[RMDB]
RNA sequence: GGGAACGACUCGAGUAGAGUCGAAAAUCUUUCAGCACCUGCUCCAGUGGCUUAGCAUUGCGGACAUGCUCAUCUGUAAUCCCGGUCAGAUCCGUCGUAAAAGCCGAAAGAGGAUGCCCAGGAUUGAGCUCCCGGGAUAUUUCGAUAUCCCGGGAGCAAAAGAAACAACAACAACAAC
Reactivity to 2A3 in 0.01 (KOAc 150mM, MgCl2 10mM, bicine 150mM(pH8.5), 24C), signal-to-noise 2, nucleotides 027 to 126: u000c010u000u060u060c060a030g010c050a030c000c030u070g010c000u070c030c000a030g000u110g100g000c010u050u070a040g050c000a060u050u090g020c070g000g020a000c000a080u090g030c000u030c050a070u000c020u000g040u170a000a090u050c020c010c000g000g050u030c020a010g000a130u000c030c050g040u030c020g020u050a070a050a050a040g100c100c030g120a080a120a000g160a010g000g030a020u060g030c000c000c000a020g070g000a140u070u090g010a020
Chemical mapping of a 177-nucleotide RNA with 2A3. The RNA was probed in 150 mM KOAc, 10 mM MgCl2 and 150 mM bicine (pH 8.5) at 24 C. Reactivities are given for positions 27 through 126. The 2A3 profile rests on 647 reads. The data come from the RNA Mapping Database (RMDB), library OK1LIB. 2A3 adducts were read by reverse transcription with SuperScript II with manganese.